[RMDB]
RNA sequence: GGGAACGACUCGAGUAGAGUCGAAAAUGGAACUGGGAGCCUUCAGCAGCCAACCUUCCUAGUACCUGGGGGACUGAGGAUCUUGGUCCAGAAGGGGAUCUGGAUACCACAUCAUUUACUACAUUUGUAGCCAAGAGAGCAUUCUCCUCUGCAACAAGUAAUGGAUUUAGUUCGCUAAAUCCAUUACAAAAGAAACAACAACAACAAC
Reactivity to DMS in 0.01 (KOAc 150mM, MgCl2 10mM, bicine 150mM(pH8.5), 24C), signal-to-noise 1, nucleotides 027 to 156: u000g000g010a080a070c030u010g020g030g010a170g000c000c000u020u020c050a130g090c150a120g000c000c080a040a190c050c010u000u000c020c020u000a120g010u000a110c050c040u000g000g020g000g080g020a170c080u000g020a080g000g010a070u000c090u000u000g030g000u000c020c020a050g000a080a080g040g000g040g000a080u000c040u010g010g000a130u000a060c050c030a110c100a140u010c050a090u000u000u000a020c010u050a020c020a270u000u000u000g010u010a000g020c030c070a030a140g020a090g000a100g030c080a060u010u020c020u000c010c040u000c010u010g040c050a060a080c050a050a220
Reactivity to 2A3 in 0.01 (KOAc 150mM, MgCl2 10mM, bicine 150mM(pH8.5), 24C), signal-to-noise 4, nucleotides 027 to 156: u090g020g020a040a050c060u030g000g050g000a040g060c020c000u100u090c070a080g040c040a030g040c060c020a010a050c020c020u040u040c010c000u010a010g040u050a080c020c030u060g020g000g030g000g010a000c040u060g040a040g030g010a040u000c000u060u080g000g010u010c020c010a010g020a030a040g030g010g020g010a020u000c010u020g000g010a020u080a140c020c000a060c020a100u110c010a030u050u140u170a060c030u030a030c020a130u100u100u280g040u020a000g030c050c020a060a010g040a020g000a010g070c020a030u100u010c010u010c020c030u040c030u080g000c020a070a070c010a200a030